Description:
The record gives the reactivity of an RNA of 177 nucleotides to DMS. The RNA was probed in 150 mM KOAc, 10 mM MgCl2 and 150 mM bicine (pH 8.5) at 24 C. For DMS the reverse transcriptase was MarathonRT. Source: RMDB library OK2TRN, as collected in RNAgym.
[RMDB]
RNA sequence: GGGAACGACUCGAGUAGAGUCGAAAAGACAUGCCUACGGUGGUCAUACGGACCAGGUUGGCGAAAGUCGGCGGGGUGCGCAGGCCCUGCGGGGUCUGAACCUUUUUCUGGGACAGCGCGGUCAUGAAGCGCCAUAUCAGUUCGCUGAUAUGGCGCUAAAAGAAACAACAACAACAAC
Reactivity to DMS in 0.01 (KOAc 150mM, MgCl2 10mM, bicine 150mM(pH8.5), 24C), signal-to-noise 1, nucleotides 027 to 126: g010a140c070a170u000g000c000c000u000a060c010g000g050u000g010g020u000c020a190u010a140c260g020g000a050c000c050a050g010g000u000u000g000g000c020g010a070a130a110g010u000c050g030g000c150g000g000g000g000u000g000c130g000c000a000g000g000c000c000c000u000g020c180g060g020g030g030u000c000u000g000a020a030c010c020u020u030u000u010u000c050u000g000g000g000a120c120a000g000c090g000c070g020g000u000c050a080u030g020a210